Chemical mapping of a 177-nucleotide RNA with DMS. The reactions ran in a buffer of 150 mM KOAc, 10 mM MgCl2 and 150 mM bicine (pH 8.5), at 24 C. For DMS the reverse transcriptase was MarathonRT.
RNA sequence: GGGAACGACUCGAGUAGAGUCGAAAAAAAAGAUAUGGACCCACUACCCACCGUCAAGACCAGGGCGACGAAGCAAUUCGGAAACGAAUUGCAGAGCCUUGAGACGAGGUGGGUCCUAAGUCAAAAAGUAAAAAGUCAAGUUCGCUUGACUUUUUACAAAAGAAACAACAACAACAAC
Reactivity to DMS in 0.01 (KOAc 150mM, MgCl2 10mM, bicine 150mM(pH8.5), 24C), signal-to-noise 2, nucleotides 027 to 126: a080a050a140a140g020a220u010a200u000g000g000a000c000c010c010a000c040u000a090c000c000c010a300c130c010g000u040c000a160a300g080a260c300c040a010g000g000g080c030g040a140c260g000a100a140g010c000a000a010u010u010c000g030g000a080a100a050c000g000a000a020u000u000g050c000a030g000a080g000c000c010u010u000g010a090g000a020c000g000a110g000g020u040g000g030g000u000c000c050u000a030a030g010u020c130a020a160a070a110a070